The data come from the RNA Mapping Database (RMDB), library OK2TST. The record gives the reactivity of an RNA of 177 nucleotides to DMS. The reactions ran in a buffer of 150 mM KOAc, 10 mM MgCl2 and 150 mM bicine (pH 8.5), at 24 C. DMS adducts were read by reverse transcription with MarathonRT.
RNA sequence: GGGAACGACUCGAGUAGAGUCGAAAAUUGAUGAUGAUUAUGAGACAGAAGAUGACUUGGAUGAUGUAGAAGAAGUUGAUGACGAGGCACAUGAUCCAGAUGGACUUGUUGUCAAAAAUAAAAUCGAUAAAUCCAGCUCAUUCGUGAGCUGGAUUUAAAAAGAAACAACAACAACAAC
Reactivity to DMS in 0.01 (KOAc 150mM, MgCl2 10mM, bicine 150mM(pH8.5), 24C), signal-to-noise 1, nucleotides 027 to 126: u030u030g010a090u010g000a100u000g010a130u000u000a110u010g000a230g000a030c050a060g000a060a050g020a060u000g020a020c090u000u000g020g000a060u000g060a040u010g010u000a070g100a070a170g030a040a090g050u000u000g020a090u000g000a060c040g010a140g000g000c050a070c070a020u000g000a060u000c060c050a040g020a110u000g030g000a080c000u000u010g000u010u000g000u020c010a030a060a060a080a040u000a030a020a090a050u010c100g010a160